[RMDB]
RNA sequence: GGGAACGACUCGAGUAGAGUCGAAAAGAUAUGGAGAGGUAAGGGACGAGGAUCUGUGGUGAAACUAUAUGGUCGGAAACGACCAUAUAGGAGUACGCCACAGGGAGUCCUAUCCUCUCCUAAGUCAGCCUUACAAUAGGUUCGCCUAUUGUAAGGCAAAAGAAACAACAACAACAAC
Reactivity to 2A3 in 0.01 (KOAc 150mM, MgCl2 10mM, bicine 150mM(pH8.5), 24C), signal-to-noise 3, nucleotides 027 to 126: g010a010u030a030u110g000g000a020g020a010g040g040u190a230a300g050g000g000a000c040g080a300g070g010a010u000c010u000g000u000g010g030u090g040a300a090a000c010u020a000u000a000u000g010g000u020c000g000g020a050a020a020c000g020a000c030c000a000u000a000u000a010g000g000a010g030u040a010c080g000c000c000a000c000a010g000g000g000a000g000u000c000c000u010a020u030c010c000u000c000u020c000c000u010a000a000g010u010c030a020
Reactivity to DMS in 0.01 (KOAc 150mM, MgCl2 10mM, bicine 150mM(pH8.5), 24C), signal-to-noise 3, nucleotides 027 to 126: g010a030u000a290u010g000g020a010g040a030g000g010u020a090a300g000g000g030a020c000g000a070g020g010a020u010c000u000g010u000g010g020u000g020a220a240a110c000u000a010u000a010u000g000g010u000c000g000g000a050a050a130c000g010a010c000c000a000u010a000u000a010g020g020a120g000u000a130c240g010c000c000a000c000a000g020g010g020a020g000u000c010c010u000a200u010c000c000u000c000u010c000c000u000a000a070g020u000c010a210